[RMDB]
RNA sequence: GGGAACGACUCGAGUAGAGUCGAAAAGAUAUGGAUCAGUCCUAUUUCCAUCGAUCGGAACUCGGAAACGAGUUCCGGGAGGAGGAUAGGAGCUGAUCCUAAGUCAAAAGUCAGCUUCGGCUGACAAGAUAAUUACUAUGUUCGCAUAGUAAUUAUCAAAAGAAACAACAACAACAAC
Reactivity to 2A3 in 0.01 (KOAc 150mM, MgCl2 10mM, bicine 150mM(pH8.5), 24C), signal-to-noise 7, nucleotides 027 to 126: g010a020u080a040u200g000g000a010u010c000a010g040u040c000c000u020a030u060u130u010c060c070a220u250c040g050a040u050c000g010g000a000a000c010u010c010g010g040a070a070a080c000g010a000g000u010u010c010c000g000g000g000a020g000g020a010g030g020a000u010a010g030g020a090g130c000u000g010a000u000c000c000u000a020a020g020u000c020a020a040a050a180g000u000c000a000g000c020u080u200c300g200g000c000u000g000a010c000a000a000
Reactivity to DMS in 0.01 (KOAc 150mM, MgCl2 10mM, bicine 150mM(pH8.5), 24C), signal-to-noise 9, nucleotides 027 to 126: g000a050u000a300u000g000g000a010u000c000a010g020u010c000c000u000a020u000u000u010c010c010a220u000c080g010a280u010c000g000g000a010a010c000u000c000g010g010a100a110a200c010g020a020g000u000u000c000c000g000g000g000a230g010g000a040g020g010a040u000a010g010g010a050g010c010u000g000a000u000c000c000u000a010a090g000u000c050a110a100a120a160g010u000c000a010g000c000u000u010c230g030g010c000u000g000a000c010a030a070
This 177-nucleotide RNA was probed chemically with 2A3 and DMS.
Source: RMDB library TTRDES, as collected in RNAgym.
For DMS the reverse transcriptase was MarathonRT.
The 2A3 profile rests on 38,377 reads.
2A3 is a SHAPE reagent: it acylates the 2'-hydroxyl of flexible nucleotides of all four kinds.
The reactions ran in a buffer of 150 mM KOAc, 10 mM MgCl2 and 150 mM bicine (pH 8.5), at 24 C.